[RMDB]
RNA sequence: GGGAACGACUCGAGUAGAGUCGAAAACUUGAAGACUAUGGUUUUGAACACGUGGUUUUUGGUGAUGUCUCAAAAACUACAGUAGGUGGUAUGCAUUUGCUAAUAUCGCAGAUCCGUCUUGCUAACAUGGGUUUGUUUUCAGCGCAGGACUUUAUGAAACCUAGGAUAUCUUCGGAUAUCCUAGGUUAAAAGAAACAACAACAACAAC
Reactivity to DMS in 0.01 (KOAc 150mM, MgCl2 10mM, bicine 150mM(pH8.5), 24C), signal-to-noise 2, nucleotides 027 to 156: c030u000u020g020a110a150g010a140c050u010a060u000g010g020u000u000u000u000g010a100a080c080a130c080g070u000g010g030u000u000u000u000u000g010g030u010g010a150u000g020u010c080u000c020a040a030a030a030a040c010u010a030c020a140g020u000a060g030g020u000g020g010u000a090u010g010c050a150u010u000u000g010c040u000a080a090u000a060u000c090g010c020a080g030a050u010c040c030g020u000c040u000u010g000c040u000a040a120c080a100u000g020g010g010u000u000u000g000u000u000u000u000c050a070g020c070g030c040a080g020g010a050c030u000u000u000a080u020g010a190
Reactivity to 2A3 in 0.01 (KOAc 150mM, MgCl2 10mM, bicine 150mM(pH8.5), 24C), signal-to-noise 2, nucleotides 027 to 156: c050u040u150g040a050a000g030a010c050u030a080u130g030g020u050u070u140u170g030a050a000c020a010c170g010u020g050g000u000u000u000u000u000g020g050u070g090a120u140g200u020c020u010c020a030a030a010a000a000c010u050a000c020a010g020u030a010g020g020u020g030g010u010a040u070g000c010a020u020u050u050g030c000u030a120a150u080a100u240c070g030c020a010g010a070u050c010c000g050u000c020u030u010g050c000u030a050a050c020a090u060g040g000g000u010u010u010g030u040u090u060u070c040a010g030c000g020c060a000g050g010a020c000u090u080u250a120u250g020a240
Notes: This 207-nucleotide RNA was probed chemically with DMS and 2A3. For DMS, 5,678 sequencing reads were counted. The reactions ran in a buffer of 150 mM KOAc, 10 mM MgCl2 and 150 mM bicine (pH 8.5), at 24 C.